This 177-nucleotide RNA was probed chemically with 2A3 and DMS.
DMS adducts were read by reverse transcription with MarathonRT.
Conditions: 150 mM KOAc, 10 mM MgCl2 and 150 mM bicine (pH 8.5), 24 C.
2A3 adducts were read by reverse transcription with SuperScript II with manganese.
RNA sequence: GGGAACGACUCGAGUAGAGUCGAAAAAAUAAUGUCAUCUGUUAACAUAAAAAAAGUUUGACUUCACAAAAGCAGCUGGAAAUGGACAACCACAAUAUGCAUAAAUCUAACUCCUACCAUCAGCUACUACACGCGUACUAUUCGUAGUACGCGUGUAAAAAGAAACAACAACAACAAC
Reactivity to 2A3 in 0.01 (KOAc 150mM, MgCl2 10mM, bicine 150mM(pH8.5), 24C), signal-to-noise 2, nucleotides 027 to 126: a000a000u290a030a100u130g000u000c010a020u000c000u060g050u130u220a090a040c080a150u300a010a080a020a000a020a000a000g050u100u030u070g050a010c000u080u050c030a010c010a060a110a010a040g050c010a040g010c000u020g050g090a000a220a000u040g010g010a010c050a080a100c000c020a050c100a020a020u040a010u280g080c090a040u060a090a050a030u060c040u110a000a090c010u020c010c000u000a010c020c000a040u040c000a000g010c070u020a020c000
Reactivity to DMS in 0.01 (KOAc 150mM, MgCl2 10mM, bicine 150mM(pH8.5), 24C), signal-to-noise 1, nucleotides 027 to 126: a050a060u000a110a020u180g000u000c000a010u000c040u010g000u040u000a100a140c100a110u000a000a000a030a060a000a030a000g000u030u000u000g000a080c000u080u030c060a170c120a030a250a060a110g000c020a080g020c110u000g000g000a030a100a130u000g020g020a000c070a040a190c040c070a140c110a010a050u020a110u000g000c280a060u000a040a050a000u050c010u050a030a070c100u000c000c000u010a050c180c030a000u000c120a000g000c090u000a000c000